Conditions: 150 mM KOAc, 10 mM MgCl2 and 150 mM bicine (pH 8.5), 24 C. This 177-nucleotide RNA was probed chemically with DMS and 2A3. For 2A3, 2,208 sequencing reads were counted. As a SHAPE reagent, 2A3 marks flexible, mostly unpaired nucleotides at the ribose 2'-OH. For DMS the reverse transcriptase was MarathonRT. Reactivities are given for positions 27 through 126. It was measured as part of the RMDB library OK1LIB.
[RMDB]
RNA sequence: GGGAACGACUCGAGUAGAGUCGAAAAUAAUCAUAAAUUAGAGACUAAGGAGAUUAAGCAGUGGUGGAAAAUUGUCGGAUAUAGUCUAAUUUAUCAUGAAGACUAACACACCACUUCCAUCUUCUUCGCUUCAUACGCUAUUCGUAGCGUAUGAAGCAAAAGAAACAACAACAACAAC
Reactivity to DMS in 0.01 (KOAc 150mM, MgCl2 10mM, bicine 150mM(pH8.5), 24C), signal-to-noise 2, nucleotides 027 to 126: u040a070a010u020c080a130u000a020a080a070u020u020a060g000a100g000a260c170u000a000a020g000g050a010g000a030u000u000a150a170g000c110a020g060u000g000g000u000g010g000a040a000a040a090u010u010g010u020c040g000g000a080u000a030u060a140g000u030c050u000a140a010u090u000u000a050u010c040a140u010g020a230a090g000a020c040u000a000a020c200a120c000a000c010c000a000c000u000u000c050c090a030u000c000u000u020c000u000u020c270
Reactivity to 2A3 in 0.01 (KOAc 150mM, MgCl2 10mM, bicine 150mM(pH8.5), 24C), signal-to-noise 4, nucleotides 027 to 126: u150a020a090u070c060a000u100a210a160a090u200u160a100g040a040g040a100c090u090a050a020g010g000a000g010a010u050u040a040a000g000c010a000g000u020g020g000u010g020g090a040a060a100a240u050u080g020u030c050g030g000a040u070a040u030a150g070u000c060u110a120a130u090u110u070a110u070c070a060u170g090a090a030g010a000c020u030a020a000c030a000c000a000c050c000a000c000u020u020c000c000a000u010c000u010u000c000u010u000c040